[RMDB]
This 207-nucleotide RNA was probed chemically with 2A3 and DMS.
RNA sequence: GGGAACGACUCGAGUAGAGUCGAAAACAGAGCUAAUGAGCCACAUACCUACCCAAGGUGAAAGCUCCAUCUCUCGCAAUGUGUAACUCAUGAUUCUCAUGACCCCUGGUUGGAGAGAUCCGGACUAUAGACUAGAGGGUGUUCGCACCCUCUAGAAUCCCUGAUGAGUAUUCGUACUCAUCAGGGAAAAAGAAACAACAACAACAAC
Reactivity to 2A3 in 0.01 (KOAc 150mM, MgCl2 10mM, bicine 150mM(pH8.5), 24C), signal-to-noise 1, nucleotides 027 to 156: c020a000g020a010g040c030u180a220a100u100g060a070g040c030c010a050c010a050u180a090c000c020u010a040c000c000c010a000a030g020g030u080g030a110a000a030g000c060u000c000c020a060u000c000u000c040u050c030g100c170a080a080u100g040u050g030u170a040a010c010u000c030a000u030g050a230u300u080c220u100c130a010u040g060a040c000c020c000c070u080g100g000u010u040g000g000a020g000a000g010a000u020c100c070g010g000a000c010u040a050u170a300g080a040c020u000a010g000a000g000g010g020u040g000u010u020c030g050c020a000c000c000c000u000c010u010a000g000a000a000
Reactivity to DMS in 0.01 (KOAc 150mM, MgCl2 10mM, bicine 150mM(pH8.5), 24C), signal-to-noise 2, nucleotides 027 to 156: c010a120g030a060g020c100u000a100a140u000g020a070g030c020c030a050c070a130u020a120c060c000u020a120c010c030c020a130a190g010g010u000g010a090a030a130g000c040u000c010c040a060u010c020u000c010u000c020g030c050a080a150u000g020u010g030u000a020a020c070u000c020a000u000g010a220u000u000c140u000c010a040u000g000a060c000c000c010c020u000g030g030u000u000g000g010a090g010a060g000a030u000c050c050g050g000a070c050u000a090u000a150g000a190c010u010a020g000a070g030g020g010u000g010u000u000c280g000c050a040c050c000c010u000c000u010a000g000a060a170
Notes: The reactions ran in a buffer of 150 mM KOAc, 10 mM MgCl2 and 150 mM bicine (pH 8.5), at 24 C. Source: RMDB library M2RFPK, as collected in RNAgym. DMS adducts were read by reverse transcription with MarathonRT. High 2A3 reactivity points to a flexible backbone, as in loops and unpaired stretches.